The record gives the reactivity of an RNA of 177 nucleotides to 2A3 and DMS. For DMS, 1,194 sequencing reads were counted. The RNA was probed in 150 mM KOAc, 10 mM MgCl2 and 150 mM bicine (pH 8.5) at 24 C.
[RMDB]
RNA sequence: GGGAACGACUCGAGUAGAGUCGAAAACUUUUUGGAUGAACUUGAUGAUCCAAAUGUGAGAAUCAUUUUAGAAUGCAGAAUUUAAAUUACAACAUUGUGUUUUGCUCCCUGUUCGUGUGAACAGGGACACCCCCUAAAGGUUCGCCUUUAGGGGGUGAAAAGAAACAACAACAACAAC
Reactivity to 2A3 in 0.01 (KOAc 150mM, MgCl2 10mM, bicine 150mM(pH8.5), 24C), signal-to-noise 1, nucleotides 027 to 126: c030u010u080u050u030u090g050g010a000u010g130a140a140c030u070u150g020a040u070g010a000u050c000c030a000a140a000u230g040u050g030a110g100a110a040u020c010a040u020u060u040u130a070g000a040a020u090g040c010a030g000a040a000u100u150u110a080a110a030u170u180a090c050a170a000c010a130u100u080g030u020g010u090u030u000u030g020c010u030c000c000c000u010g010u000u040c020g000u050g080u070g300a000a000c000a020g000g000g000a000
Reactivity to DMS in 0.01 (KOAc 150mM, MgCl2 10mM, bicine 150mM(pH8.5), 24C), signal-to-noise 2, nucleotides 027 to 126: c050u000u000u000u000u000g000g000a050u000g010a130a110c090u000u020g010a140u010g010a100u010c010c010a040a090a050u010g000u000g000a140g010a190a060u000c040a030u000u000u020u000a120g000a100a060u000g010c040a040g000a040a030u010u010u000a060a060a100u000u000a130c150a030a060c120a090u000u010g010u000g000u000u010u000u000g020c170u000c000c000c000u000g010u000u000c000g000u000g000u010g010a010a000c000a000g000g000g000a020